Annotation: Source: RMDB library OK2TST, as collected in RNAgym. An RNA of 177 nucleotides, treated with DMS and read out base by base. The reactions ran in a buffer of 150 mM KOAc, 10 mM MgCl2 and 150 mM bicine (pH 8.5), at 24 C. Reactivities are given for positions 27 through 126. DMS adducts were read by reverse transcription with MarathonRT.
RNA sequence: GGGAACGACUCGAGUAGAGUCGAAAAAGCAGCGCUGCCGACGCCAAGAUCGCGGCUAGAGAUGGUGGCGUGCGGCAAACACGCUUAGUCUUAGUCUAGUCGCUUGAACUGUUUUAACUUGCUAGCAAGGUAGGGAGGGUUUCGACCCUCCCUACCUAAAAGAAACAACAACAACAAC
Reactivity to DMS in 0.01 (KOAc 150mM, MgCl2 10mM, bicine 150mM(pH8.5), 24C), signal-to-noise 1, nucleotides 027 to 126: a100g000c060a040g000c050g060c090u000g030c000c030g000a110c060g000c060c070a060a130g020a080u000c080g010c020g000g020c000u000a000g000a240g020a030u000g000g010u000g000g000c000g080u000g000c040g000g000c120a020a060a150c080a050c010g000c000u010u000a120g000u010c020u010u000a130g010u000c010u000a010g000u030c010g000c010u010u020g010a040a140c180u000g000u000u000u000u000a070a070c090u010u000g000c060u020a090g020c120a130